Conditions: 150 mM KOAc, 10 mM MgCl2 and 150 mM bicine (pH 8.5), 24 C. An RNA of 177 nucleotides, treated with 2A3 and DMS and read out base by base. Reactivities are given for positions 27 through 126.
[RMDB]
RNA sequence: GGGAACGACUCGAGUAGAGUCGAAAAGAUAUGGACGCAUAUGGACAUGACGAUGGGUUCGGAAACGAACCCGCGUCAACAGCCAUCAUGCGUCCUAAGUCAAAAGAGACUACUUCGGUAGUCUCAACACUACUAUAAGGUUCGCCUUAUAGUAGUGAAAAGAAACAACAACAACAAC
Reactivity to 2A3 in 0.01 (KOAc 150mM, MgCl2 10mM, bicine 150mM(pH8.5), 24C), signal-to-noise 4, nucleotides 027 to 126: g010a010u070a040u170g000g000a000c000g000c010a010u020a000u020g010g020a070c120a230u300g010a000c030g200a250u230g020g010g010u010u010c010g020g000a040a040a030c000g000a010a000c000c010c010g000c000g000u000c010a010a050c090a040g050c000c000a020u050c080a000u020g010c000g000u000c000c000u000a000a000g000u010c010a000a000a060a070g020a000g000a000c000u020a010c020u090u170c300g100g010u010a000g000u000c010u000c020a000a000
Reactivity to DMS in 0.01 (KOAc 150mM, MgCl2 10mM, bicine 150mM(pH8.5), 24C), signal-to-noise 5, nucleotides 027 to 126: g020a060u010a300u010g010g000a000c000g020c000a020u000a020u010g000g010a050c100a290u000g010a010c000g010a080u020g030g000g010u000u000c000g010g010a070a080a170c000g010a010a000c000c000c010g020c010g000u000c000a040a080c300a190g000c010c000a000u000c240a010u000g010c000g000u000c000c000u000a000a070g010u010c040a120a050a100a100g010a040g000a030c010u000a010c000u000u010c190g020g040u000a000g000u000c010u000c000a000a300